RNA sequence: GGGAACGACUCGAGUAGAGUCGAAAACUGUCCUGUGUGGAAGUACGUGAGUACUUCACGCUCUACGGGAGUAGAGCCACACAGAUCGUGGAGCGAUGUCUUGGAACUAGUCCCCUAGUUCACGUAUGACUCACGUCAUACCAAGACGACAGCCACGCACGUGGUGCGAGUUCGCUCGCACCACGUGAAAAGAAACAACAACAACAAC
Reactivity to 2A3 in 0.01 (KOAc 150mM, MgCl2 10mM, bicine 150mM(pH8.5), 24C), signal-to-noise 1, nucleotides 027 to 156: c030u040g020u050c000c000u000g000u000g000u000g040g020a000a000g000u010a000c040g100u140g140a050g030u000a010c000u020u000c020a050c000g000c000u000c000u000a000c010g070g040g060a090g000u000a010g000a000g020c000c000a000c000a000c000a000g030a070u060c000g000u000g070g080a030g090c030g030a040u140g020u020c010u000u020g040g000a000a010c000u010a010g200u300c050c050c010c010u010a010g010u020u000c100a060c080g000u000a000u020g000a020c030u050c200a080c160g000u000c000a000u000a010c010c000a000a010g000a000c020g000a010c010a010g010c000c000a030c000g000